[RMDB]
RNA sequence: GGGAACGACUCGAGUAGAGUCGAAAAUGUCCUUCCUCUGAAACUCCAGCCUGCCUGGAUGUCCUGUGUCUGGUCCUCAGCUCUCCUGCCAGGCGGGGAGAGGGGAGGUCAGGAGGAUUUGGGGGCAUAAAUAGCAUGAGUUCGCUCAUGCUAUUUAAAAAGAAACAACAACAACAAC
Reactivity to DMS in 0.01 (KOAc 150mM, MgCl2 10mM, bicine 150mM(pH8.5), 24C), signal-to-noise 7, nucleotides 027 to 126: u010g000u000c000c010u000u000c010c010u000c020u010g010a130a140a140c060u000c010c010a180g010c020c050u000g000c060c000u000g010g000a110u000g000u000c030c030u010g010u000g000u000c030u000g010g000u010c030c030u010c050a080g000c040u000c020u000c020c030u000g010c030c030a040g010g010c030g000g000g010g010a050g010a120g010g010g010g010a020g010g000u000c130a140g010g000a030g000g000a230u000u000u000g010g010g010g010g020c200a080
Reactivity to 2A3 in 0.01 (KOAc 150mM, MgCl2 10mM, bicine 150mM(pH8.5), 24C), signal-to-noise 4, nucleotides 027 to 126: u050g020u020c010c000u050u060c000c010u020c010u020g040a140a070a070c010u010c010c010a040g010c020c020u060g040c010c000u030g030g030a090u080g080u050c010c030u120g000u030g080u130c030u030g040g050u100c020c020u060c020a040g000c030u020c010u010c030c010u020g060c020c010a040g010g000c050g000g000g020g000a020g030a010g040g040g000g010a010g000g010u020c040a020g020g050a020g020g010a010u070u040u090g040g000g010g000g010c010a010